[RMDB]
RNA sequence: GGGAACGACUCGAGUAGAGUCGAAAACAUACCUCUAGGCGUUUAACGUUAUAUGGAAAUUUCUGACUUAGAUUACAAAAAUGGUCCCAGUUUGUGAAAAUGCUAUUCGCUAAGAGAUUUGAGACCACCCGCAUUUAUUAUUCGUAAUAAAUGCGGGAAAAGAAACAACAACAACAAC
Reactivity to DMS in 0.01 (KOAc 150mM, MgCl2 10mM, bicine 150mM(pH8.5), 24C), signal-to-noise 2, nucleotides 027 to 126: c010a040u000a030c090c000u000c030u000a300g000g030c010g020u000u010u010a030a050c030g010u000u000a100u010a090u000g010g000a080a080a170u000u000u000c070u000g010a090c040u010u010a050g000a060u000u000a140c060a010a050a020a120a100u010g000g010u010c010c030c070a060g020u000u000u010g020u010g000a120a060a040a030u000g000c070u000a010u000u000c070g000c010u010a160a020g000a060g010a030u000u000u040g010a120g000a230c030c030a200
This 177-nucleotide RNA was probed chemically with DMS.
For DMS the reverse transcriptase was MarathonRT.
Reactivities are given for positions 27 through 126.